RNA sequence: GGGAACGACUCGAGUAGAGUCGAAAAGGCAAGAGUGAAACCAAUGAGACCAAUUAAGAGACUGUCUCAGCCAGCCUAGGAGGACAUUAGCUUAGGGCUGAGGAUAUAGCAGUCUGGAUGUGGUGAGAAGUCACAGGACUUACAGUAUCCUUUUAUAGUACGUAAAUACUUUCGAGUAUUUACGUACAAAAGAAACAACAACAACAAC
Reactivity to DMS in 0.01 (KOAc 150mM, MgCl2 10mM, bicine 150mM(pH8.5), 24C), signal-to-noise 4, nucleotides 027 to 156: g030g010c040a070a110g020a080g060u010g000a060a080a090c040c040a040a100u000g000a130g010a090c040c060a070a120u010u000a090a160g000a120g010a070c040u000g000u000c010u000c030a060g010c060c060a140g020c010c010u000a120g020g010a120g020g020a100c100a060u010u010a080g000c040u000u000a120g010g010g030c000u000g010a020g020g020a050u010a060u010a130g020c020a070g010u000c010u000g010g000a110u000g010u000g020g000u000g010a110g010a070a090g010u010c030a080c080a130g010g010a090c050u000u010a070c080a140g000u000a070u000c010c010u020u010u000u000a140u010a290